[RMDB]
RNA sequence: GGGAACGACUCGAGUAGAGUCGAAAACGAUUAGCAUUCGUGCUAAUCGAAUCAGGUAGUACCUAUCUCUAUUACCUGUAGUGGCCAACGUCGGGACAGAGAAUCGAGUCCUGUUCGCAGGACUCAACAAUGAGGUCUAAUUCGUUAGACCUCAUUGAAAAGAAACAACAACAACAAC
Reactivity to DMS in 0.01 (KOAc 150mM, MgCl2 10mM, bicine 150mM(pH8.5), 24C), signal-to-noise 9, nucleotides 027 to 126: c010g010a010u000u000a000g000c000a030u000u020c200g020u000g010c000u000a000a000u000c000g010a070a070u000c020a020g000g010u000a010g010u010a070c170c070u000a090u000c100u010c060u000a020u000u000a020c010c000u000g000u000a070g020u010g010g000c040c030a070a080c150g010u000c100g000g000g000a070c080a060g010a160g000a090a100u010c180g000a020g010u000c000c000u000g000u000u010c160g020c010a010g000g000a010c000u000c000a040a100
Reactivity to 2A3 in 0.01 (KOAc 150mM, MgCl2 10mM, bicine 150mM(pH8.5), 24C), signal-to-noise 9, nucleotides 027 to 126: c010g000a000u010u000a000g000c010a010u020u060c230g100u070g000c000u000a010a000u010c000g000a000a080u080c010a000g040g000u020a010g010u020a040c010c040u110a140u160c070u000c010u030a030u040u050a040c010c000u020g010u030a080g070u050g080g030c030c020a060a030c070g100u070c040g050g030g020a040c030a040g080a010g030a110a110u190c120g000a010g000u000c000c000u010g010u030u030c210g010c020a000g000g000a000c000u000c010a000a010